[RMDB]
RNA sequence: GGGAACGACUCGAGUAGAGUCGAAAAGAAUCCUCGUCGGCUUUUGUUUCCAGCUUGAUACUGAUUUCGAUCUGUAUGAGCCGUCUCCACUUAUAUUUUGCUGGACGACAACGAGGAUACAAUUAGAGGGUUGCGUUUAGUUCGCUGAACGCAACCCAAAAGAAACAACAACAACAAC
Reactivity to DMS in 0.01 (KOAc 150mM, MgCl2 10mM, bicine 150mM(pH8.5), 24C), signal-to-noise 2, nucleotides 027 to 126: g000a120a010u000c010c000u000c000g010u000c110g020g020c130u000u050u020u020g040u010u050u010c030c000a300g000c000u020u000g040a060u010a030c040u010g000a050u000u000u080c170g000a000u000c020u050g020u010a020u010g000a050g000c010c020g000u000c020u000c010c010a040c110u020u030a110u080a060u010u000u020u020g000c100u010g040g000a010c080g020a020c030a130a000c030g000a030g000g000a010u010a060c140a100a090u050u050a050g010a300
Reactivity to 2A3 in 0.01 (KOAc 150mM, MgCl2 10mM, bicine 150mM(pH8.5), 24C), signal-to-noise 4, nucleotides 027 to 126: g040a020a040u020c000c000u000c000g030u000c040g060g040c110u040u160u160u300g100u110u200u000c000c000a000g000c010u000u050g100a020u010a030c020u070g000a040u000u120u120c130g060a010u050c000u010g010u010a020u030g020a000g040c000c030g000u010c000u010c010c000a020c010u070u060a080u160a180u300u180u130u070g020c060u010g000g000a020c130g000a000c030a020a000c020g010a000g000g000a000u010a020c010a000a130u080u090a090g050a080